This 177-nucleotide RNA was probed chemically with 2A3 and DMS. For DMS the reverse transcriptase was MarathonRT. Values are in units of 0.01, from 0 to 300, in steps of 10.
RNA sequence: GGGAACGACUCGAGUAGAGUCGAAAACGGCCCUUCGGUCGUGAUCGCUCCCGUCGAUAGCGUGUCCUCUGUGAGUUCACAGUCGGCAAGGUCAUCGCCCUGACGGGUGAUUGACCUGGUUGAUGAUCCCUAACACUUCUUUCGAGAAGUGUUAGGGAAAAGAAACAACAACAACAAC
Reactivity to 2A3 in 0.01 (KOAc 150mM, MgCl2 10mM, bicine 150mM(pH8.5), 24C), signal-to-noise 3, nucleotides 027 to 126: c010g000g000c030c000c000u080u200c200g030g000u000c000g000u010g010a050u000c010g000c000u000c010c030c000g110u000c010g000a030u070a060g080c020g010u110g160u080c010c010u020c040u050g040u060g050a180g110u190u170c060a030c000a040g020u040c020g030g040c080a050a020g010g000u000c000a010u010c000g030c000c000c000u100g170a100c190g010g000g000u000g030a030u010u160g000a000c000c010u000g000g010u010u050g020a030u030g010a010u010
Reactivity to DMS in 0.01 (KOAc 150mM, MgCl2 10mM, bicine 150mM(pH8.5), 24C), signal-to-noise 2, nucleotides 027 to 126: c030g000g050c000c000c220u000u000c100g010g010u000c000g040u020g000a150u000c060g030c070u020c030c020c110g000u000c000g020a000u000a080g010c030g040u050g040u020c010c000u050c020u000g000u000g010a130g010u020u000c030a030c050a070g000u000c050g000g030c000a090a000g010g000u000c000a050u000c000g000c000c020c000u000g020a300c300g000g020g020u000g000a000u020u030g010a000c000c000u010g000g000u000u000g010a050u010g010a110u010